RNA sequence: GGGAACGACUCGAGUAGAGUCGAAAACGGGAAACCGAACGCAAGUAACUUAGUUACUUAUUUAACUUCCUGUAUAUUUUUAAACCUAAUUUUGGGUUCGUAAUGCACCGCUCUUUGUGAGCGGUGUACAUUGCGUACCAUUCGUGGUACGCAAUGUAAAAGAAACAACAACAACAAC
Reactivity to DMS in 0.01 (KOAc 150mM, MgCl2 10mM, bicine 150mM(pH8.5), 24C), signal-to-noise 5, nucleotides 027 to 126: c010g010g010g000a030a040a090c120c110g000a090a070c300g010c190a010a000g000u000a010a010c010u020u030a160g010u000u000a000c000u000u000a110u010u010u000a070a200c110u000u000c000c000u000g000u010a090u030a020u040u030u030u020u020a050a050a080c010c000u020a050a140u020u020u020u010g010g000g010u000u000c070g010u000a070a090u030g000c000a000c000c000g010c000u000c010u010u030u040g010u040g020a000g010c000g000g010u000g000u000
Reactivity to 2A3 in 0.01 (KOAc 150mM, MgCl2 10mM, bicine 150mM(pH8.5), 24C), signal-to-noise 8, nucleotides 027 to 126: c010g020g000g010a040a000a010c050c040g040a080a020c100g040c150a010a010g010u000a010a000c080u180u170a080g030u030u000a010c000u020u030a090u070u210u080a060a060c040u020u020c010c000u010g070u050a130u020a100u160u170u020u050u200a060a070a040c020c020u070a190a300u080u150u190u150g060g010g010u050u030c070g090u090a120a070u150g010c000a000c000c000g020c030u000c010u030u220u300g170u120g040a000g000c000g000g000u000g010u000